An RNA of 177 nucleotides, treated with 2A3 and DMS and read out base by base.
In probing experiments dimethyl sulfate is read out at A N1 and C N3, which are open when not base-paired.
Conditions: 150 mM KOAc, 10 mM MgCl2 and 150 mM bicine (pH 8.5), 24 C.
Reactivities are given for positions 27 through 126.
For 2A3 the reverse transcriptase was SuperScript II with manganese.
Source: RMDB libraries RFM100 and RFMREP, as collected in RNAgym.
For DMS the reverse transcriptase was MarathonRT.

RNA sequence: GGGAACGACUCGAGUAGAGUCGAAAAGCGUGCCCUCUCACAGACAUUAAUGCAGUAGUACUAGUGCUGAGAGAGAAAAUUAAAUGCGUUCUUGGUCUUUGAACCAGAGGUGGUUAUGCCUUAUAUAACACGAACGGAAGUUCGCUUCCGUUCGUGUAAAAGAAACAACAACAACAAC
Reactivity to 2A3 in 0.01 (KOAc 150mM, MgCl2 10mM, bicine 150mM(pH8.5), 24C), signal-to-noise 8, nucleotides 027 to 126: g020c010g020u020g020c000c000c000u000c000u000c000a050c000a010g240a200c010a040u030u050a080a080u120g040c040a030g170u300a010g010u030a130c020u020a020g010u000g000c000u010g010a010g000a000g010a000g080a100a040a010a010u270u230a020a020a020u090g020c020g020u020u040c040u100u070g040g000u000c050u050u150u260g070a070a000c010c000a010g000a010g040g010u080g000g100u100u060a060u180g000c000c000u080u020a060u010a010u010a090
Reactivity to DMS in 0.01 (KOAc 150mM, MgCl2 10mM, bicine 150mM(pH8.5), 24C), signal-to-noise 3, nucleotides 027 to 126: g000c030g000u020g000c030c010c000u010c000u000c010a150c010a030g000a100c010a000u010u000a010a070u000g010c020a260g020u040a100g050u000a040c100u000a010g060u000g000c000u000g000a110g010a030g000a000g000a030a020a020a040u000u040a030a040a070u010g000c020g010u000u010c050u020u020g020g000u000c000u020u020u010g000a110a040c000c010a060g000a040g010g010u000g000g000u020u030a050u020g020c040c000u000u030a060u010a080u030a100